[RMDB]
RNA sequence: GGGAACGACUCGAGUAGAGUCGAAAAGAACUGGACCGGGUUCGUUGGGCGCACCAGUUGCGCUCCUACCGAAUUGCUUCGGUAUUGCGGAUCGGUGUCGUGGGGCUCAUGGUCGCCGCGAUGGUCGCCCGGACAUGAGAUUCGUCUCAUGUCCGGGAAAAGAAACAACAACAACAAC
Reactivity to 2A3 in 0.01 (KOAc 150mM, MgCl2 10mM, bicine 150mM(pH8.5), 24C), signal-to-noise 2, nucleotides 027 to 126: g000a060a050c050u090g040g080a040c000c010g060g030g000u000u020c020g010u090u160g050g000g000c010g010c010a020c030c080a110g040u110u010g000c000g000c000u060c000c000u010a000c010c030g050a020a030u250u210g100c110u110u060c010g090g000u090a080u020u300g010c020g040g000a010u050c050g000g070u070g060u020c010g010u020g000g060g000g000c020u090c100a130u200g040g020u050c090g040c220c000g000c000g000a040u100g030g040u000c020g040
Reactivity to DMS in 0.01 (KOAc 150mM, MgCl2 10mM, bicine 150mM(pH8.5), 24C), signal-to-noise 1, nucleotides 027 to 126: g000a110a140c080u010g010g000a010c020c020g000g000g000u000u000c000g040u010u000g000g000g030c010g020c010a010c030c220a110g000u030u010g030c030g010c000u000c030c240u000a030c000c000g010a020a110u000u010g020c300u000u000c030g010g000u000a030u000u020g020c020g000g000a010u000c040g010g000u000g020u010c090g050u000g010g000g000g000c030u010c130a080u000g000g010u000c010g020c000c030g010c040g010a050u000g030g020u000c040g050

Structure probing data (2A3 and DMS) for a 177-nucleotide construct. It was measured as part of the RMDB library OK2TST. Conditions: 150 mM KOAc, 10 mM MgCl2 and 150 mM bicine (pH 8.5), 24 C.